[RMDB]
RNA sequence: GGGAACGACUCGAGUAGAGUCGAAAACAACUUUCGCCUUUAAUGCGCACGGGUGAAUUGGUGGUUGAAGGUGACAUUCAAGUAGUCCAGCAACUUGUCGCGUUAUUAGAUCUUGCUGAGUGGGAUACCACUCACCCCUCUUCGGAGGGGUGAGUGGAAAAGAAACAACAACAACAAC
Reactivity to DMS in 0.01 (KOAc 150mM, MgCl2 10mM, bicine 150mM(pH8.5), 24C), signal-to-noise 2, nucleotides 027 to 126: c090a100a110c130u000u000u000c120g010c050c090u000u010u000a060a050u000g000c040g010c100a070c100g020g000g000u010g010a030a130u010u010g000g030u020g020g020u010u000g000a040a080g010g020u010g010a090c110a120u010u000c020a020a110g010u000a090g020u010c030c010a070g030c090a060a030c040u010u000g010u000c080g020c070g000u000u020a090u000u000a100g000a020u010c140u000u000g030c000u000g000a080g020u010g010g010g000a120u000a150
Reactivity to 2A3 in 0.01 (KOAc 150mM, MgCl2 10mM, bicine 150mM(pH8.5), 24C), signal-to-noise 1, nucleotides 027 to 126: c020a000a100c010u050u080u040c110g000c040c000u060u100u070a100a070u060g010c060g000c020a000c040g050g000g030u040g020a080a080u020u030g040g050u010g000g160u060u040g030a010a020g070g090u130g100a040c040a080u020u080c000a080a000g110u050a030g050u030c030c000a000g000c000a010a000c030u000u040g020u030c030g010c020g010u040u010a090u010u050a020g000a050u020c020u060u090g000c030u030g020a010g020u010g010g040g170a020u270a130